[RMDB]
RNA sequence: GGGAACGACUCGAGUAGAGUCGAAAACGGUGAAGCACCUCCCAGUCUGAUGGUGCUCACCUCGGACAAGGGAUGGCCGUACACAUGGAAAUGGAAGGAGAAUAAAUCCACUCGUGACUGCCAUGUAUCCAGCAUAAAAUUUCGAUUUUAUGCUGGAAAAAGAAACAACAACAACAAC
Reactivity to DMS in 0.01 (KOAc 150mM, MgCl2 10mM, bicine 150mM(pH8.5), 24C), signal-to-noise 7, nucleotides 027 to 126: c160g020g010u000g010a090a070g030c030a020c010c010u010c040c040c060a190g010u010c140u010g020a060u010g020g030u000g000c030u000c020a020c000c000u000c060g000g010a050c090a070a080g000g000g000a050u000g010g000c040c060g010u010a100c070a060c010a060u000g010g010a030a100a110u000g010g000a110a100g000g000a120g000a100a120u010a070a100a120u010c040c060a070c130u010c130g010u000g010a130c030u000g000c010c010a020u000g010u000a110
Reactivity to 2A3 in 0.01 (KOAc 150mM, MgCl2 10mM, bicine 150mM(pH8.5), 24C), signal-to-noise 6, nucleotides 027 to 126: c030g000g000u010g040a130a030g020c010a010c000c010u040c010c030c010a020g090u070c110u190g150a210u300g030g000u010g000c000u000c000a000c000c000u010c030g030g020a050c020a100a080g060g040g000a030u030g000g000c010c020g030u100a070c020a000c000a040u080g030g060a040a110a060u100g060g070a050a080g140g110a130g060a130a070u170a130a080a040u020c010c010a020c050u070c070g040u020g030a010c010u010g000c000c000a010u000g010u010a080